[RMDB]
This 207-nucleotide RNA was probed chemically with 2A3. The data come from the RNA Mapping Database (RMDB), library OK3TST.
RNA sequence: GGGAACGACUCGAGUAGAGUCGAAAAUAACAGGCCAGGCACGGUGGCUCACACCUGUAAUCCCAGCACUUUGGGAGGCUGAGCCAGGCAGAUCACAAGGUCAGGAGUUCGAGACCAGCUUGGCCAAUAUUGGUGAAACCCUGUCUCUACUAAAAAAGCGAUUAGCUAAUUUCGAUUAGCUAAUCGCAAAAGAAACAACAACAACAAC
Reactivity to 2A3 in 0.01 (KOAc 150mM, MgCl2 10mM, bicine 150mM(pH8.5), 24C), signal-to-noise 2, nucleotides 027 to 156: u090a000a060c060a030g010g000c000c000a000g050g000c020a010c140g020g070u030g010g000c000u020c000a030c000a000c010c030u030g100u070a020a100u040c010c010c000a010g040c110a140c220u210u220u040g000g000g000a000g020g000c000u050g000a000g120c020c000a000g000g020c000a020g030a090u130c060a020c040a130a080g000g000u020c000a000g170g020a040g000u190u120c050g030a040g020a090c000c000a010g020c000u020u010g000g050c010c000a000a010u020a010u020u030g090g020u040g070a060a080a110c010c010c010u020g020u030c030u060c010u110a140c050u130a130a120a030a030a030a000